RNA sequence: GGGAACGACUCGAGUAGAGUCGAAAAUUUACGGUAUUCGUACCGUAAACGAGCAAGCAAGCAGCGCAACGUGACAAGACGAUAAUAAGAUCGAGCAUGCUGAUAGUAGGAUCUUCGGAUCCUACAACACCUUAUUAGCGUUCGCGCUAAUAAGGUGAAAAGAAACAACAACAACAAC
Reactivity to DMS in 0.01 (KOAc 150mM, MgCl2 10mM, bicine 150mM(pH8.5), 24C), signal-to-noise 5, nucleotides 027 to 126: u000u000u000a000c000g010g010u000a010u000u010c200g030u000a000c000c000g010u000a000a000a020c110g000a110g000c060a070a080g010c060a080a080g020c050a030g010c060g030c030a070a090c060g010u010g000a080c110a080a100g010a080c050g000a040u000a060a080u000a060a090g000a060u000c020g000a100g030c050a070u000g020c040u000g020a100u000a100g000u000a010g000g010a010u000c000u010u010c180g020g010a010u000c000c000u000a000c010a060a180
Reactivity to 2A3 in 0.01 (KOAc 150mM, MgCl2 10mM, bicine 150mM(pH8.5), 24C), signal-to-noise 5, nucleotides 027 to 126: u000u000u000a000c000g000g020u010a030u020u070c180g040u040a020c000c000g000u000a000a000a010c050g030a050g100c040a100a010g010c020a020a040g020c020a020g010c010g030c060a090a060c060g080u060g080a080c040a080a060g060a040c040g040a040u050a200a050u110a170a110g090a160u090c040g000a030g030c020a030u100g010c020u060g030a080u080a090g010u000a010g000g000a000u000c010u000u000c060g070g000a000u000c010c000u000a000c000a000a000

The record gives the reactivity of an RNA of 177 nucleotides to DMS and 2A3.
For DMS the reverse transcriptase was MarathonRT.